[RMDB]
RNA sequence: GGGAACGACUCGAGUAGAGUCGAAAAAGGACCGCGAGGGGGAGAGUUCAGCGACCGAGAGGGGAUGAACAACAAGGUGCGGGGAUCCCGGAAAAUUCACUCCCAAGAAGGUAAGAGAGAACUCAAGGAUAUGGUAUUCGUUCGCGAAUACCAUAUCAAAAGAAACAACAACAACAAC
Reactivity to DMS in 0.01 (KOAc 150mM, MgCl2 10mM, bicine 150mM(pH8.5), 24C), signal-to-noise 1, nucleotides 027 to 126: a070g010g020a050c110c090g010c120g030a080g020g020g000g030g000a140g000a080g000u010u010c010a160g010c080g020a050c010c060g000a170g000a150g010g000g010g000a100u030g000a030a070c100a040a080c110a080a090g000g030u000g020c040g000g000g000g000a040u030c020c010c020g020g000a030a080a040a140u020u000c060a020c090u000c010c010c040a040a120g000a050a100g000g000u000a030a080g020a090g020a060g000a060a060c010u000c030a090a160g000
Source: RMDB library VIROID, as collected in RNAgym. This 177-nucleotide RNA was probed chemically with DMS. The RNA was probed in 150 mM KOAc, 10 mM MgCl2 and 150 mM bicine (pH 8.5) at 24 C.